Record summary:
The record gives the reactivity of an RNA of 177 nucleotides to DMS. The RNA was probed in 150 mM KOAc, 10 mM MgCl2 and 150 mM bicine (pH 8.5) at 24 C. The data come from the RNA Mapping Database (RMDB), library OK2TRN.
RNA sequence: GGGAACGACUCGAGUAGAGUCGAAAAUCGGUGAUCCGAGACUUUUGAACAGAUGUUACUGUAGAACAGUGGCAGUUCGGUGUCAGUAGAACUGACGCAUCUGAGUCUCGGAUCACCUGUAUGGCGGGCAGUGGUCAGUAUUCGUACUGACCACUGCAAAAGAAACAACAACAACAAC
Reactivity to DMS in 0.01 (KOAc 150mM, MgCl2 10mM, bicine 150mM(pH8.5), 24C), signal-to-noise 2, nucleotides 027 to 126: u010c090g000g050u000g030a000u000c010c000g020a010g000a010c000u000u000u010u030g030a040a100c040a140g020a300u010g000u020u000a020c010u000g070u030a070g010a060a300c020a010g000u020g000g000c010a010g030u010u000c000g070g030u000g000u000c010a020g020u000a120g030a040a300c000u000g010a000c020g040c010a030u040c110u010g000a010g000u000c000u000c000g000g010a000u000c000a000c010c000u000g030u010a060u000g000g000c190g000g020